[RMDB]
RNA sequence: GGGAACGACUCGAGUAGAGUCGAAAAGGUAACAGUUACACGCCCAUAAAAGAAACCCAGGUGGAAAUGACCAGUAACUUCACUUGGGAGCAGGUAACGCAGUGAAAACAAGUGGGAGUUCAGCAGGACCCAUACUUGGGUUCGCCCAAGUAUGGGUAAAAGAAACAACAACAACAAC
Reactivity to DMS in 0.01 (KOAc 150mM, MgCl2 10mM, bicine 150mM(pH8.5), 24C), signal-to-noise 1, nucleotides 027 to 126: g020g010u010a050a120c070a090g030u000u020a060c030a090c190g020c000c010c100a090u000a100a020a130a190g010a180a230a090c020c010c000a000g020g060u010g000g020a010a080a210u010g010a100c110c050a070g010u000a050a070c070u010u000c020a010c010u010u000g000g000g000a080g010c000a040g020g000u000a030a080c100g020c100a110g020u000g000a050a070a060a130c030a060a030g000u000g000g000g000a060g000u010u000c110a060g000c060a040g000g000